[RMDB]
Chemical mapping of a 177-nucleotide RNA with DMS and 2A3. The 2A3 profile rests on 1,025 reads. The data come from the RNA Mapping Database (RMDB), library OK2TRN. DMS adducts were read by reverse transcription with MarathonRT. Values cover nucleotides 27 to 126.

RNA sequence: GGGAACGACUCGAGUAGAGUCGAAAACUUCUCCCACCGUGUGGGUGAUGAUCACGAUGGGCACGUGGUUCGUGCCCCUGCCCUCGGGGACUUCCUUCUGGAGCACGGAGGAGAUGCUGAUGUCGUGCUCCGCGAAACUCUUCGGAGUUUCGCGGAGAAAAGAAACAACAACAACAAC
Reactivity to DMS in 0.01 (KOAc 150mM, MgCl2 10mM, bicine 150mM(pH8.5), 24C), signal-to-noise 1, nucleotides 027 to 126: c070u000u020c020u000c010c000c010a090c060c190g000u000g060u000g000g010g030u000g000a040u000g000a110u010c020a100c090g000a100u020g020g000g000c040a040c080g000u010g040g030u010u000c190g010u000g000c000c000c000c100u000g000c030c000c000u000c050g000g000g010g000a240c150u000u000c030c030u000u000c100u000g000g010a140g000c000a040c030g020g000a300g010g010a090g010a040u020g030c090u000g010a160u030g010u020c030g000u000g000
Reactivity to 2A3 in 0.01 (KOAc 150mM, MgCl2 10mM, bicine 150mM(pH8.5), 24C), signal-to-noise 1, nucleotides 027 to 126: c000u030u000c000u030c030c010c050a290c020c100g080u090g050u060g120g050g060u090g060a090u040g010a070u050c030a000c090g060a160u270g000g000g030c000a010c070g120u190g070g130u270u160c050g070u210g010c000c040c010c000u040g020c000c010c000u010c000g040g040g060g000a020c000u080u060c010c010u090u120c100u180g020g100a110g050c000a000c000g000g000a010g030g010a030g000a020u120g000c030u130g030a070u060g040u110c070g030u030g010